[RMDB]
RNA sequence: GGGAACGACUCGAGUAGAGUCGAAAACCGUGAAAUUAAUGUACUGGUGCACAAUCCAGUCUCUCCCACAUGAAAGCGAAGUCCCCGUGGAGCUUUACUGCAGCCUGUAGCUGUGACGCGAUUUUUAACGGCUUAUGGUUUUCGAACCAUAAGCCGUAAAAGAAACAACAACAACAAC
Reactivity to 2A3 in 0.01 (KOAc 150mM, MgCl2 10mM, bicine 150mM(pH8.5), 24C), signal-to-noise 2, nucleotides 027 to 126: c000c070g000u060g130a100a110a150u200u150a060a050u190g040u020a050c000u020g030g000u100g010c180a060c110a200a050u070c000c000a020g000u000c000u000c010u000c000c040c000a060c020a070u140g060a040a020a020g010c040g030a030a000g030u010c010c010c000c000g010u070g020g030a080g000c000u060u050u050a100c060u010g030c000a000g050c020c040u110g040u120a030g000c020u030g050u030g020a010c020g020c010g060a060u060u000u000u000u070a080
Reactivity to DMS in 0.01 (KOAc 150mM, MgCl2 10mM, bicine 150mM(pH8.5), 24C), signal-to-noise 1, nucleotides 027 to 126: c030c020g050u030g000a070a030a050u040u020a050a100u000g000u080a150c000u000g010g000u030g000c100a050c300a090a020u050c000c010a010g000u000c020u000c010u000c000c030c000a080c050a200u020g000a040a070a010g020c000g000a270a100g000u000c030c000c000c010g050u010g000g210a050g000c000u000u000u040a060c050u020g000c030a090g000c080c050u030g000u020a190g000c000u050g000u000g000a000c100g040c050g000a070u000u000u000u000u000a050
Source: RMDB library RFM100, as collected in RNAgym. Structure probing data (2A3 and DMS) for a 177-nucleotide construct. Conditions: 150 mM KOAc, 10 mM MgCl2 and 150 mM bicine (pH 8.5), 24 C. Values cover nucleotides 27 to 126. For 2A3 the reverse transcriptase was SuperScript II with manganese. The DMS profile rests on 1,154 reads. Values are in units of 0.01, from 0 to 300, in steps of 10.